[RMDB]
RNA sequence: GGGAACGACUCGAGUAGAGUCGAAAAAAACUGACGAUCUUUGCAUUGGAAAUCCACCAUUAAGCUUGCAAUUGAUCAAACUUUAUGAAAAAACUGGAAAGUCUUCCUUUAAAUCGGAGAUUAUUAAGAUGCCAUUAAUAUUCGUAUUAAUGGCAUCAAAAGAAACAACAACAACAAC
Reactivity to 2A3 in 0.01 (KOAc 150mM, MgCl2 10mM, bicine 150mM(pH8.5), 24C), signal-to-noise 2, nucleotides 027 to 126: a000a000a000c090u070g040a040c030g000a010u010c020u030u020u010g070c010a070u060u000g070g070a070a070a070u090c040c030a020c000c010a080u070u140a190a030g090c060u000u000g000c000a060a190u180u050g000a010u000c000a010a010a010c010u070u100u120a060u120g020a060a000a060a150a070a070c090u120g060g070a180a040a020g040u000c030u070u040c010c000u060u160u000a010a190a020u110c040g000g000a070g000a000u010u090a050u160u160a200a040
Reactivity to DMS in 0.01 (KOAc 150mM, MgCl2 10mM, bicine 150mM(pH8.5), 24C), signal-to-noise 2, nucleotides 027 to 126: a090a050a050c080u000g040a270c120g000a010u010c020u000u000u040g010c040a050u000u010g000g010a050a100a050u010c110c040a100c080c030a060u000u000a090a080g000c130u000u000g000c020a030a040u010u020g010a060u000c010a090a060a050c090u010u000u010a050u030g000a030a090a070a110a100a070c160u010g010g010a050a070a100g000u000c050u000u000c000c030u000u010u010a060a070a080u000c280g010g000a050g010a050u000u000a060u010u010a130a160

The record gives the reactivity of an RNA of 177 nucleotides to 2A3 and DMS.
The data come from the RNA Mapping Database (RMDB), library OK2TST.
The RNA was probed in 150 mM KOAc, 10 mM MgCl2 and 150 mM bicine (pH 8.5) at 24 C.
For 2A3 the reverse transcriptase was SuperScript II with manganese.
DMS adducts were read by reverse transcription with MarathonRT.
Values cover nucleotides 27 to 126.
For 2A3, 1,305 sequencing reads were counted.
The DMS profile rests on 1,337 reads.